[RMDB]
Structure probing data (2A3 and DMS) for a 177-nucleotide construct.

RNA sequence: GGGAACGACUCGAGUAGAGUCGAAAAGCAAGAUGCUUCGGCAUCUUGCAGUCGUAGCGCGAUCGACAGAAUUACAGCUAUGUCGAACGAGGAAGAGCGCCCACAUCAUCCCUUUCGAGGGAUGAAAAUUUAGUAGUAGGUUCGCCUACUACUAAAUAAAAGAAACAACAACAACAAC
Reactivity to 2A3 in 0.01 (KOAc 150mM, MgCl2 10mM, bicine 150mM(pH8.5), 24C), signal-to-noise 8, nucleotides 027 to 126: g000c000a000a000g000a010u010g010c010u060u140c260g090g000c000a010u000c000u000u000g000c010a000g040u020c050g040u040a020g040c030g000c010g070a040u010c010g000a010c000a010g080a070a040u230u170a170c070a100g050c100u100a030u110g000u010c010g010a030a050c020g010a040g060g080a090a070g040a030g050c030g040c000c020c000a060c010a050u030c000a010u000c000c010c000u020u040u070c220g110a020g000g000g000a000u000g000a010a000a000
Reactivity to DMS in 0.01 (KOAc 150mM, MgCl2 10mM, bicine 150mM(pH8.5), 24C), signal-to-noise 9, nucleotides 027 to 126: g010c000a000a010g010a010u000g010c000u000u010c210g040g010c000a000u000c000u000u000g010c010a020g010u000c050g010u010a130g010c060g010c020g010a080u000c000g000a010c010a020g000a130a140u010u010a110c300a140g010c100u010a090u000g000u000c000g010a020a080c030g000a070g000g010a100a100g000a120g000c060g000c010c000c010a100c240a140u000c000a010u000c000c000c000u000u000u010c150g010a020g010g000g000a000u000g000a000a030a050
Source: RMDB library M2PK50, as collected in RNAgym.
Conditions: 150 mM KOAc, 10 mM MgCl2 and 150 mM bicine (pH 8.5), 24 C.
The 2A3 profile rests on 19,822 reads.